[RMDB]
RNA sequence: GGGAACGACUCGAGUAGAGUCGAAAAAGCCCGCAUACUACGGUAUGCGCGCAAUCAGAAAUCGGGAAUGAUGUUCUCCCCUGGGAUUCCAAAACCGCUGUUUCGCUGAUGACGUCUGCUUUUUUAAUCACCACCGUUUGGUUCGCCAAACGGUGAAUCUUAUACUUAUCUUCGGAUAAGUAUAAGAAAAAGAAACAACAACAACAAC
Reactivity to 2A3 in 0.01 (KOAc 150mM, MgCl2 10mM, bicine 150mM(pH8.5), 24C), signal-to-noise 4, nucleotides 027 to 156: a000g020c040c000c000g010c000a000u000a000c010u000a000c120g060g000u000a000u020g000c000g000c010g010c020a040a110u100c030a060g110a060a120a030u130c050g030g000g010a050a100u060g050a070u090g070u070u050c050u050c030c000c000c010u050g060g030g060a100u120u110c040c000a020a010a050a090c030c030g040c060u040g040u050u100u060c040g000c030u030g010a030u030g040a030c040g040u010c030u030g050c050u120u100u030u010u030u140a090a130u090c040a030c090c000a010c000c000g000u000u000u000g000g020u030u030c090g030c060c000a000a000a000c000g000g000u000g000a000a000
Reactivity to DMS in 0.01 (KOAc 150mM, MgCl2 10mM, bicine 150mM(pH8.5), 24C), signal-to-noise 2, nucleotides 027 to 156: a170g000c010c020c010g040c000a030u000a020c010u000a050c260g080g020u000a010u000g000c040g000c110g020c030a070a130u000c030a110g010a050a090a030u000c060g010g010g000a100a110u000g010a110u000g020u000u000c050u000c020c020c020c070u000g010g020g000a120u040u020c010c060a040a050a100a060c040c040g040c040u010g020u010u000u000c040g000c030u000g020a140u010g010a100c080g010u010c080u010g010c010u000u000u000u010u000u000a070a110u010c020a120c110c000a010c000c010g000u000u000u010g010g010u000u000c300g020c010c000a010a010a010c000g000g000u000g000a000a000